Structure probing data (DMS) for a 177-nucleotide construct. Conditions: 150 mM KOAc, 10 mM MgCl2 and 150 mM bicine (pH 8.5), 24 C. Reactivities are given for positions 27 through 126. DMS adducts were read by reverse transcription with MarathonRT. The data come from the RNA Mapping Database (RMDB), library RFMREP.

[RMDB]
RNA sequence: GGGAACGACUCGAGUAGAGUCGAAAACGCGUGUUGCAGCGCGUCUAACAUAGGCAGGGCAACCUGCCGUUUGCUAAACGGAAGACAGAAAAAAAGUCCACCCUACGUGUUCGCACGUAGGGUGGACCGAUAAAGAUCUCUUCGGAGAUCUUUAUCGAAAAGAAACAACAACAACAAC
Reactivity to DMS in 0.01 (KOAc 150mM, MgCl2 10mM, bicine 150mM(pH8.5), 24C), signal-to-noise 4, nucleotides 027 to 126: c020g020c010g000u000g010u000u010g010c130a300g000c000g000c020g000u000c070u000a050a100c050a050u000a130g010g020c000a010g000g020g010c300a070a120c000c000u000g010c000c000g000u000u000u010g010c020u010a020a080a120c090g000g000a070a060g000a060c100a080g000a000a000a070a050a070a060a100g000u000c000c000a010c000c010c000u000a000c000g010u000g000u010u030c240g010c000a010c000g000u000a000g000g010g040u000g000g000a000c000